[RMDB]
Record summary:
The record gives the reactivity of an RNA of 177 nucleotides to DMS and 2A3. For DMS the reverse transcriptase was MarathonRT. The data come from the RNA Mapping Database (RMDB), library OK1LIB. For DMS, 1,392 sequencing reads were counted. For 2A3 the reverse transcriptase was SuperScript II with manganese. For 2A3, 894 sequencing reads were counted.

RNA sequence: GGGAACGACUCGAGUAGAGUCGAAAAGUAAAAAGAUAACGGGAAUCCAAGAGCGCCCCAAAACUUACCCGGCAGGGUGGGGCACGCCCGUUAUAGGGCUGGAAAAAGAAAAGAAAAGAAAAAGAAAAAUAAUAUGCUGAUUCGUCAGCAUAUUAUUAAAAGAAACAACAACAACAAC
Reactivity to DMS in 0.01 (KOAc 150mM, MgCl2 10mM, bicine 150mM(pH8.5), 24C), signal-to-noise 2, nucleotides 027 to 126: g020u020a060a120a090a160a110g010a040u010a000a070c030g000g010g000a300a100u000c070c040a110a110g020a190g000c140g080c020c010c020c000a030a090a140a130c090u040u020a040c030c040c020g000g030c210a160g020g000g050u000g000g040g040g020c010a080c010g010c000c020c000g000u010u020a000u070a100g010g010g000c030u000g020g000a030a050a030a020a170g000a030a090a080a050g020a110a070a080a050g000a050a060a060a030a160g010a030a080a050
Reactivity to 2A3 in 0.01 (KOAc 150mM, MgCl2 10mM, bicine 150mM(pH8.5), 24C), signal-to-noise 1, nucleotides 027 to 126: g010u060a000a140a060a030a000g070a060u010a020a010c000g000g050g030a080a130u070c140c040a100a000g050a050g070c070g000c000c000c010c030a000a290a030a090c010u050u040a020c020c010c040g000g010c100a090g000g000g010u000g000g000g010g010c000a000c000g030c000c000c030g030u030u000a010u010a000g030g000g000c020u030g010g030a120a060a020a000a020g060a060a090a020a000g060a070a070a000a020g100a010a100a060a010a010g070a010a170a070